RNA sequence: GGGAACGACUCGAGUAGAGUCGAAAAUGCCUCUUUAAGGGUCUAACACGGGAAGAUCCCACAGGCAUAGGACCCUGCCUUGAAGAUUCUCCUUGUAGGUAAUUACGUCAGCACUUCUAUCAAAAUCAUAUGAAUGCUCUCAGAAUGGCACAUAUAAAGCGGCUAUUUUAUUCGUAAAAUAGCCGCUAAAAGAAACAACAACAACAAC
Reactivity to 2A3 in 0.01 (KOAc 150mM, MgCl2 10mM, bicine 150mM(pH8.5), 24C), signal-to-noise 1, nucleotides 027 to 156: u020g010c010c000u090c000u080u090u000a040a070g000g000g000u040c040u040a150a080c030a020c220g020g080g000a110a040g000a100u090c000c000c000a020c030a070g000g000c030a030u100a080g050g000a060c000c000c030u030g000c000c000u020u010g030a020a010g030a150u090u070c050u000c030c020u020u050g080u110a050g000g080u030a040a040u220u030a030c070g030u010c030a010g000c050a030c010u050u000c090u130a060u090c080a030a070a170a170u190c020a030u070a080u230g050a110a010u020g000c000u010c030u030c060a080g000a140a010u130g000g000c100a010c000a000u300a060u300a120a190
The record gives the reactivity of an RNA of 207 nucleotides to 2A3. Values cover nucleotides 27 to 156. 2A3 adducts were read by reverse transcription with SuperScript II with manganese. The RNA was probed in 150 mM KOAc, 10 mM MgCl2 and 150 mM bicine (pH 8.5) at 24 C.